[RMDB]
RNA sequence: GGGAACGACUCGAGUAGAGUCGAAAAGCCGGGCAGCAGAUCGCCGACUCCGGUAACACAGGCAUCAGCAGCGGGCCGCACCUGCACUUCGGUGUGUUCAACGGGGGUUGGCCGAAUGACAUCGACCCCAAUGCCUACCUCGGCGGGGCGGGCGUGCACUCCCUCCAGUAUUCGUACUGGAGGGAGUAAAAGAAACAACAACAACAAC
Reactivity to 2A3 in 0.01 (KOAc 150mM, MgCl2 10mM, bicine 150mM(pH8.5), 24C), signal-to-noise 1, nucleotides 027 to 156: g090c010c010g020g000g000c050a080g010c000a000g010a140u170c020g000c000c010g020a040c000u000c010c020g020g010u040a050a040c080a000c010a030g080g030c010a000u050c040a110g040c000a010g140c060g060g000g060c050c010g000c030a180c000c020u020g110c110a070c090u080u130c100g100g040u080g010u010g010u080u110c120a090a080c070g000g010g000g010g020u080u040g020g000c020c010g020a120a070u240g000a040c030a070u050c040g100a190c000c000c000c000a010a070u150g020c000c000u020a060c020c040u010c040g000g000c000g040g020g000g000c000g020g070g010c040g000u060g050c020